[RMDB]
Description
An RNA of 177 nucleotides, treated with 2A3 and read out base by base. The RNA was probed in 150 mM KOAc, 10 mM MgCl2 and 150 mM bicine (pH 8.5) at 24 C. 2A3 adducts were read by reverse transcription with SuperScript II with manganese.

RNA sequence: GGGAACGACUCGAGUAGAGUCGAAAACAUACGCCAAUCAGGUGAUCGUGGUGCCCGGCUACGGGUUGGCCGUCGCGCAGGCGCAGCAUGCGGUGAAGGACCUGGCAACCUUGCUGGAGGACAGGGGCUAGCGCUGACCGUUCGCGGUCAGCGCUAGAAAAGAAACAACAACAACAAC
Reactivity to 2A3 in 0.01 (KOAc 150mM, MgCl2 10mM, bicine 150mM(pH8.5), 24C), signal-to-noise 1, nucleotides 027 to 126: c010a220u080a050c160g010c020c010a150a180u210c080a150g050g020u010g010a060u110c030g030u010g000g050u030g080c000c000c010g000g000c000u130a050c020g070g070g000u080u190g190g070c000c000g000u030c000g000c010g000c030a090g020g010c050g010c000a030g170c000a000u060g020c040g000g000u000g100a020a010g110g000a100c050c050u060g000g000c020a060a060c000c020u050u110g000c000u000g140g050a010g000g000a010c010a070g000g000g000g000